Background: An RNA of 177 nucleotides, treated with 2A3 and DMS and read out base by base. The reactions ran in a buffer of 150 mM KOAc, 10 mM MgCl2 and 150 mM bicine (pH 8.5), at 24 C. 2A3 adducts were read by reverse transcription with SuperScript II with manganese. DMS adducts were read by reverse transcription with MarathonRT. In probing experiments dimethyl sulfate is read out at A N1 and C N3, which are open when not base-paired. For DMS, 4,947 sequencing reads were counted.
RNA sequence: GGGAACGACUCGAGUAGAGUCGAAAAGAUAUGGACCCAUGAUAGACAUGGUGCAUCUCGGAAACGAGAUGACACCAACAGCUAUAUGGGUCCUAAGUCAAAAGAUACCAGAGUUCGCUCUGGUAUCCAGGUUAGUUCAGUUCGCUGAACUAACCUGAAAAGAAACAACAACAACAAC
Reactivity to 2A3 in 0.01 (KOAc 150mM, MgCl2 10mM, bicine 150mM(pH8.5), 24C), signal-to-noise 3, nucleotides 027 to 126: g020a010u010a020u030g000g000a010c050c000c020a020u180g240a040u040a010g060a040c300a300u160g000g020u020g000c000a000u000c000u000c010g000g000a030a010a000c000g000a000g000a000u000g010a010c020a000c010c000a020a040c090a020g030c000u000a000u000a010u020g030g000g000u000c000c000u000a010a010g000u000c010a030a010a030a130g010a000u000a000c010c000a000g000a000g020u080u280c300g090c110u000c000u010g020g010u000a000u000c000
Reactivity to DMS in 0.01 (KOAc 150mM, MgCl2 10mM, bicine 150mM(pH8.5), 24C), signal-to-noise 3, nucleotides 027 to 126: g000a010u000a020u010g000g000a010c000c000c000a000u000g020a030u000a000g000a050c150a100u010g000g020u000g000c000a000u000c000u000c000g020g000a010a010a040c010g010a010g010a020u000g000a190c010a000c000c000a050a030c220a180g000c000u000a010u000a010u000g000g010g010u000c000c000u000a000a050g000u000c000a120a100a120a150g000a000u000a000c000c000a020g020a040g000u000u010c260g010c000u010c010u000g000g010u000a000u000c000